[RMDB]
RNA sequence: GGGAACGACUCGAGUAGAGUCGAAAACAGCAAAAAGGAACCGAUUCCCACCAAGUUCGGAAAGAGAUACCGGGCGAGCCGCUGAAGAAAGAAUCUCGCUUCAGACACCCCAAGGACUCGACUGAAGAAUGCACGCCAUCGUUCGCGAUGGCGUGAACUCACAUAGAUGGUUCGCCAUCUAUGUGAGAAAAGAAACAACAACAACAAC
Reactivity to 2A3 in 0.01 (KOAc 150mM, MgCl2 10mM, bicine 150mM(pH8.5), 24C), signal-to-noise 2, nucleotides 027 to 156: c020a020g060c010a070a010a030a090a030g080g030a060a020c020c030g060a100u000u030c000c000c010a030c030c030a130a010g030u020u050c030g000g030a180a080a010g040a000g010a020u030a110c030c030g020g010g020c040g020a020g010c080c060g000c090u000g030a020a010g000a030a240a020g050a110a140u060c110u130c300g010c010u000u000c000a030g030a050c010a070c040c070c010c030a040a120g000g010a050c000u010c070g050a020c050u070g010a030a010g030a180a020u080g050c000a000c000g000c000c000a010u010c010g150u140u010c230g000c000g130a000u010g010g010c000g010u010g000a000a000
The record gives the reactivity of an RNA of 207 nucleotides to 2A3.